[RMDB]
Chemical mapping of a 207-nucleotide RNA with 2A3. It was measured as part of the RMDB library M2RFPK. 2A3 adducts were read by reverse transcription with SuperScript II with manganese. The reactions ran in a buffer of 150 mM KOAc, 10 mM MgCl2 and 150 mM bicine (pH 8.5), at 24 C.
RNA sequence: GGGAACGACUCGAGUAGAGUCGAAAACUCAAUGUAGGGAAUAACAUUGAAUUGAUACAAAUACCUUUUUCGGUGUAGGGAAAAACACCGCAUUGAUACAAAUACCUUUCUCAAUGUAGGGAAUAACAAAACAGGCAUCGCUUCGGCGAUGCCUGAACGAUUUAACCCAGUUCGCUGGGUUAAAUCGAAAAGAAACAACAACAACAAC
Reactivity to 2A3 in 0.01 (KOAc 150mM, MgCl2 10mM, bicine 150mM(pH8.5), 24C), signal-to-noise 2, nucleotides 027 to 156: c050u020c030a010a050u060g020u120a060g010g050g070a140a160u130a250a020c050a010u010u000g030a060a110u110u050g040a100u130a300c050a040a180a040u150a130c030c010u090u040u000u000u040c000g000g000u020g000u010a020g000g030g090a040a300a070a000a000c000a000c000c000g000c000a020u010u080g020a020u050a170c020a000a080a050u110a090c050c050u000u140u050c000u000c000a050a050u170g030u030a030g050g000g030a030a070u120a080a050c030a050a110a020a030c000a000g000g000c000a000u000c000g080c000u040u080c160g000g000c020g000a000u000g030c000c000u000g010a000a000